[RMDB]
An RNA of 177 nucleotides, treated with DMS and 2A3 and read out base by base. The reactions ran in a buffer of 150 mM KOAc, 10 mM MgCl2 and 150 mM bicine (pH 8.5), at 24 C. For 2A3, 5,909 sequencing reads were counted.
RNA sequence: GGGAACGACUCGAGUAGAGUCGAAAAAGAAACAGGAAGUAAAGGAGGAAGCGCACGGCAAUCGAGAAAAACACUGAAUGCCGUACAGUGACCACUCGAAAGCGCAAAUAAAACUUCCUGAAAAAAACGUAAUAAUAAUGUUCGCAUUAUUAUUACGAAAAGAAACAACAACAACAAC
Reactivity to DMS in 0.01 (KOAc 150mM, MgCl2 10mM, bicine 150mM(pH8.5), 24C), signal-to-noise 3, nucleotides 027 to 126: a140g020a110a070a120c020a010g000g010a020a010g000u000a040a090a100g010g010a080g020g010a140a150g020c020g030c020a100c080g020g030c140a110a090u000c020g000a020g000a040a070a070a140a110c030a030c040u010g000a080a080u000g030c020c050g020u000a070c020a010g020u000g010a090c120c210a170c030u000c020g000a030a060a120g000c030g030c040a060a080a080u000a020a060a050a030c000u010u010c000c000u030g000a000a000a050a060a070a030a050
Reactivity to 2A3 in 0.01 (KOAc 150mM, MgCl2 10mM, bicine 150mM(pH8.5), 24C), signal-to-noise 3, nucleotides 027 to 126: a000g070a010a060a010c010a000g000g010a000a000g010u070a110a070a080g110g060a070g040g030a140a090g010c000g000c020a020c020g190g010c080a050a100u020c010g000a000g030a050a130a020a020a020c020a000c010u040g020a130a060u110g070c030c010g040u030a020c010a010g000u010g030a050c010c040a030c040u010c020g030a070a010a010g010c010g000c010a030a060a040u060a000a080a010a000c000u010u000c000c000u000g030a070a000a010a000a000a000a000